Structure probing data (2A3 and DMS) for a 177-nucleotide construct. The reactions ran in a buffer of 150 mM KOAc, 10 mM MgCl2 and 150 mM bicine (pH 8.5), at 24 C.
[RMDB]
RNA sequence: GGGAACGACUCGAGUAGAGUCGAAAAGUGCAAAGCUAGGCUAGGUCUGGAGGCUGGUGUAAGGCGAUGCGGGUGAAGGCAGGAGGCUGAUGGAGAGAGAGACUGGGGGGAAGAAAAGCCGAAAUGGCUCCUCAUCCCAUUUCGAUGGGAUGAGGAGAAAAGAAACAACAACAACAAC
Reactivity to 2A3 in 0.01 (KOAc 150mM, MgCl2 10mM, bicine 150mM(pH8.5), 24C), signal-to-noise 2, nucleotides 027 to 126: g110u110g000c060a080a070a030g000c040u060a020g030g030c010u010a010g030g100u090c070u070g060g000a010g000g090c050u060g050g060u030g010u070a030a040g000g020c040g050a080u080g040c030g020g010g010u060g030a060a000g080g000c000a010g020g060a060g010g000c000u000g040a060u030g070g050a010g000a000g000a000g000a010g020a080c010u060g000g020g000g000g040g000a000a040g050a040a040a030a000g030c010c000g080a070a090a040u150g100g010
Reactivity to DMS in 0.01 (KOAc 150mM, MgCl2 10mM, bicine 150mM(pH8.5), 24C), signal-to-noise 2, nucleotides 027 to 126: g010u050g010c080a040a060a100g000c100u000a080g000g010c020u020a050g000g000u030c030u000g000g000a130g000g000c040u000g030g000u000g020u040a050a040g030g010c110g000a090u030g000c040g000g010g000u010g000a060a120g010g020c060a070g010g000a070g000g020c080u000g000a070u000g010g000a040g000a130g010a040g030a020g000a060c030u000g000g000g010g000g000g000a090a060g010a040a050a040a070g010c010c030g010a110a050a030u090g000g010